[RMDB]
RNA sequence: GGGAACGACUCGAGUAGAGUCGAAAAAACAGCGCGCUCACCAGGCGUUGGCCCCGCCAGUCCGCCCGCACCGCAACGCCUUCGACGUACCCGCAGCGCAGCGCGUUGCCGCGGUAGAUCAGUCGCCCCCGGCUUAUUAUUUCGAUAAUAAGCCGGGAAAAGAAACAACAACAACAAC
Reactivity to DMS in 0.01 (KOAc 150mM, MgCl2 10mM, bicine 150mM(pH8.5), 24C), signal-to-noise 2, nucleotides 027 to 126: a080a040c070a070g010c030g030c050g020c020u000c120a110c090c110a250g000g000c050g020u000u000g000g010c040c010c050c060g010c050c030a130g000u020c050c050g010c090c010c030g080c020a060c110c100g060c070a070a080c040g010c030c040u000u010c020g000a080c040g000u010a090c050c010c000g020c050a040g000c000g020c040a090g010c160g000c020g020u000u000g010c050c090g000c030g020g010u000a030g050a080u000c060a070g000u000c030g020c060c060
Conditions: 150 mM KOAc, 10 mM MgCl2 and 150 mM bicine (pH 8.5), 24 C.
Chemical mapping of a 177-nucleotide RNA with DMS.
Source: RMDB library OK2TRN, as collected in RNAgym.
Reactivities are rounded to 0.1 and cut off at 0 and 3.
For DMS, 1,089 sequencing reads were counted.